Chemical mapping of a 177-nucleotide RNA with DMS and 2A3. For 2A3 the reverse transcriptase was SuperScript II with manganese. The DMS profile rests on 2,630 reads. Conditions: 150 mM KOAc, 10 mM MgCl2 and 150 mM bicine (pH 8.5), 24 C. Values cover nucleotides 27 to 126.
RNA sequence: GGGAACGACUCGAGUAGAGUCGAAAAAAAAAAGAUAUGGACAAGACUCGCUUGGAUUUAUACAGCGAACAUAUCGGAAACGAUAUGGGAGCUGUAUUGUCAGCGAAUCUUGUCCUAAGUCAAAAAAGAUACAUUUACAGUUCGCUGUAAAUGUAUCAAAAGAAACAACAACAACAAC
Reactivity to DMS in 0.01 (KOAc 150mM, MgCl2 10mM, bicine 150mM(pH8.5), 24C), signal-to-noise 3, nucleotides 027 to 126: a010a030a070a060a120a140g000a040u000a300u010g000g010a010c000a010a020g000a010c040u000c000g030c000u000u020g010g000a020u000u020u000a020u000a010c010a020g010c000g010a300a220c000a000u010a010u000c000g010g000a130a090a160c010g000a010u000a030u000g000g010g010a300g000c000u010g010u000a000u000u000g020u000c010a030g020c000g000a010a030u000c000u010u000g010u000c000c000u000a010a030g000u030c010a000a020a060a100a110a120
Reactivity to 2A3 in 0.01 (KOAc 150mM, MgCl2 10mM, bicine 150mM(pH8.5), 24C), signal-to-noise 1, nucleotides 027 to 126: a000a020a010a020a010a020g080a050u090a060u190g010g000a010c010a010a000g010a000c010u000c010g020c060u130u260g140g000a030u230u300u040a010u030a000c000a000g010c000g000a050a020c000a010u000a000u020c000g000g000a130a070a020c020g000a000u010a010u020g020g000g010a020g000c020u000g010u000a000u010u000g000u000c000a010g010c020g000a000a010u010c000u000u010g010u010c000c000u010a000a000g000u030c020a030a050a040a000a000a100